An RNA of 207 nucleotides, treated with DMS and 2A3 and read out base by base. For 2A3, 1,160 sequencing reads were counted. The RNA was probed in 150 mM KOAc, 10 mM MgCl2 and 150 mM bicine (pH 8.5) at 24 C. It was measured as part of the RMDB library OK3TST. 2A3 adducts were read by reverse transcription with SuperScript II with manganese.
RNA sequence: GGGAACGACUCGAGUAGAGUCGAAAAAACUGAUCUGGAUCAUACCUGCAGGACAGGACAACUUAUAACAUAGUAUACGUUUACUGAUCUGGACCUAAUGUUUGUUAACUUAUUGAGCGCAGGAUAUCUACCGUGCCGCUGCGGCAGUAACGGCUACGAUACGUGAGGUUUUCGAACCUCACGUAUCAAAAGAAACAACAACAACAAC
Reactivity to DMS in 0.01 (KOAc 150mM, MgCl2 10mM, bicine 150mM(pH8.5), 24C), signal-to-noise 2, nucleotides 027 to 156: a030a050c060u020g020a030u000c020u010g000g010a150u000c010a140u000a190c010c010u010g040c020a120g000g020a300c010a100g200g010a070c090a000a080c030u000u010a130u000a090a070c130a170u000a160g030u000a060u010a030c070g020u000u010u000a160c100u010g000a030u000c010u000g000g040a040c040c020u000a070a060u000g030u000u000u000g020u000u000a070a150c090u000u000a050u010u000g000a070g090c040g000c040a000g010g000a150u000a060u000c020u010a070c000c020g010u010g000c000c010g000c010u000g060c120g000g000c070a050g050u040a010a020c050g000g010c010u000a100c150
Reactivity to 2A3 in 0.01 (KOAc 150mM, MgCl2 10mM, bicine 150mM(pH8.5), 24C), signal-to-noise 3, nucleotides 027 to 156: a000a000c150u170g010a100u030c030u040g030g000a000u020c000a000u070a200c030c010u010g050c100a220g150g010a160c000a000g050g030a060c090a040a040c080u170u060a090u060a220a060c090a170u120a030g110u070a100u010a060c050g010u020u090u080a110c080u030g030a070u030c020u020g010g050a050c010c010u080a160a090u100g040u040u060u020g060u040u040a060a060c030u040u060a040u070u180g040a000g060c040g000c080a010g010g080a020u020a020u150c030u050a070c030c040g050u060g020c030c020g050c070u040g030c020g040g030c000a010g020u020a100a020c020g040g000c010u000a030c100